The record gives the reactivity of an RNA of 177 nucleotides to 2A3. The data come from the RNA Mapping Database (RMDB), library OK1LIB. As a SHAPE reagent, 2A3 marks flexible, mostly unpaired nucleotides at the ribose 2'-OH. The 2A3 profile rests on 1,249 reads.
RNA sequence: GGGAACGACUCGAGUAGAGUCGAAAAGAGGAUUGCGGAUUGAGUACAGCGUAAUCCAACCGACGAGAGCACGGUCAGGAAGGAGCUCGGCAUUCUUCCAGUUCUCGAAGCCGAGAUUAGUACUCAAGGGUUCCUUGGAGUUCGCUCCAAGGAACCCAAAAGAAACAACAACAACAAC
Reactivity to 2A3 in 0.01 (KOAc 150mM, MgCl2 10mM, bicine 150mM(pH8.5), 24C), signal-to-noise 2, nucleotides 027 to 126: g150a070g000g010a010u000u000g000c010g030g110a030u110u100g000a010g000u010a030c040a010g020c000g010u000a020a000u020c000c000a000a010c000c030g070a060c130g040a030g000a000g130c120a020c040g070g080u080c030a080g010g090a040a010g010g020a040g000c020u010c000g000g000c020a180u080u000c000u060u010c010c020a040g010u080u000c010u020c060g000a010a030g000c000c000g020a030g000a040u030u170a020g030u000a000c000u000c000a020a090